[RMDB]
The data come from the RNA Mapping Database (RMDB), library 15KREP. This 177-nucleotide RNA was probed chemically with DMS and 2A3. The reactions ran in a buffer of 150 mM KOAc, 10 mM MgCl2 and 150 mM bicine (pH 8.5), at 24 C.
RNA sequence: GGGAACGACUCGAGUAGAGUCGAAAAGUGUUACCCUACGGGAACUGCUGAGUGCCCCUGACGUCCAGACCCUCCCCCGUCCGGGAGAAUGGAGAUUCGGGAACGUGAAGCAUGGUGGGGACGAAGCCCAGUAAGAGUACUUCGGUACUCUUACUGGAAAAGAAACAACAACAACAAC
Reactivity to DMS in 0.01 (KOAc 150mM, MgCl2 10mM, bicine 150mM(pH8.5), 24C), signal-to-noise 5, nucleotides 027 to 126: g020u010g010u000u010a120c010c000c010u000a030c040g000g030g020a090a120c200u010g050c020u010g000a300g010u000g000c100c030c010c020u000g000a040c300g000u000c000c000a020g010a170c300c080c000u000c010c000c020c080c200g000u000c140c220g000g000g010a020g000a030a120u000g000g000a040g010a130u010u000c090g000g000g000a120a040c050g000u000g000a210a050g000c020a010u000g000g030u010g000g010g000g020a080c070g000a090a110g010c100
Reactivity to 2A3 in 0.01 (KOAc 150mM, MgCl2 10mM, bicine 150mM(pH8.5), 24C), signal-to-noise 3, nucleotides 027 to 126: g050u030g080u090u120a150c000c010c000u000a020c030g040g020g140a100a070c040u020g020c010u030g020a040g050u060g060c010c020c010c040u040g010a010c010g230u000c010c000a000g010a060c010c010c000u000c020c010c000c020c040g090u050c020c010g000g010g000a010g000a000a000u010g010g000a040g010a040u040u070c020g010g000g010a050a050c020g030u070g070a040a010g010c020a010u060g060g020u020g000g010g000g010a010c040g060a040a010g070c000